RNA sequence: GGGAACGACUCGAGUAGAGUCGAAAAACAUGGCAGAGACAUACACCGGAAAACCGUAGAGAUACGGUCUGCCUUGUAGUCGGUGUACAGGAGGUGCAAGCCUGUCGUUAGGUAAUGUCGUACGCUGAGAUAAAUUGUUAUUCGUAACAAUUUAUCUAAAAGAAACAACAACAACAAC
Reactivity to 2A3 in 0.01 (KOAc 150mM, MgCl2 10mM, bicine 150mM(pH8.5), 24C), signal-to-noise 7, nucleotides 027 to 126: a000c010a010u010g010g010c010a000g010a000g010a010c000a010u030a010c010a020c010c010g020g010a020a060a010a020c000c000g000u000a010g010a000g000a050u010a010c000g000g000u000c000u030g030c000c000u010u080g040u020a030g020u020c020g000g000u010g000u010a020c010a010g020g020a020g030g060u110g040c030a020a020g030c000c000u010g040u030c050g040u040u140a030g010g040u070a060a030u050g000u020c020g010u000a010c010g000c020u010g010
Reactivity to DMS in 0.01 (KOAc 150mM, MgCl2 10mM, bicine 150mM(pH8.5), 24C), signal-to-noise 9, nucleotides 027 to 126: a080c000a010u000g000g000c000a000g000a000g000a000c010a010u000a000c000a010c000c000g000g000a010a080a110a080c000c000g010u000a000g000a210g000a190u000a000c000g000g010u000c040u010g010c030c040u010u020g010u010a060g010u020c020g010g000u000g010u010a030c050a060g010g000a080g000g000u020g010c170a090a150g000c010c000u000g000u010c090g000u010u010a060g000g020u020a090a080u010g010u000c030g000u010a110c080g020c010u000g010